The data come from the RNA Mapping Database (RMDB), library OK1LIB. An RNA of 177 nucleotides, treated with 2A3 and DMS and read out base by base. Reactivities are given for positions 27 through 126. For DMS, 12,137 sequencing reads were counted. For 2A3 the reverse transcriptase was SuperScript II with manganese.
RNA sequence: GGGAACGACUCGAGUAGAGUCGAAAACACGUUCUGUAGCGGCUGCCAUAGCUCGUUUGGUAAGCAGGAAAUCCAAUAAAUUGCCGUUGAGUUGGCGCCACAGCACUGCUGAGCGGAGUGCGGCCAACACUAGUGGGUAUUUCGAUACCCACUAGUGAAAAGAAACAACAACAACAAC
Reactivity to 2A3 in 0.01 (KOAc 150mM, MgCl2 10mM, bicine 150mM(pH8.5), 24C), signal-to-noise 9, nucleotides 027 to 126: c060a010c020g030u050u000c020u050g090u060a040g040c030g060g000c090u130g000c020c010a090u080a080g030c020u020c050g070u030u070u060g060g010u080a070a050g060c060a070g070g070a100a150a060u060c030c030a030a010u140a130a110a050u150u090g020c010c020g010u040u090g020a040g050u040u030g020g010c010g030c030c010a140c040a030g030c020a020c050u110g000c010u020g020a010g020c040g010g050a040g020u070g010c000g010g030c010c010a040a010
Reactivity to DMS in 0.01 (KOAc 150mM, MgCl2 10mM, bicine 150mM(pH8.5), 24C), signal-to-noise 6, nucleotides 027 to 126: c050a150c120g000u010u000c020u000g000u010a070g000c130g000g000c000u020g020c010c060a100u030a130g010c030u020c050g010u020u010u020g020g010u010a070a030g030c080a070g010g000a110a080a100u040c030c040a080a100u020a030a100a160u010u000g010c030c010g000u010u010g010a060g000u000u000g010g020c130g010c020c040a100c080a090g000c050a150c110u030g020c010u010g000a240g000c050g000g000a120g020u020g010c030g000g000c020c070a080a130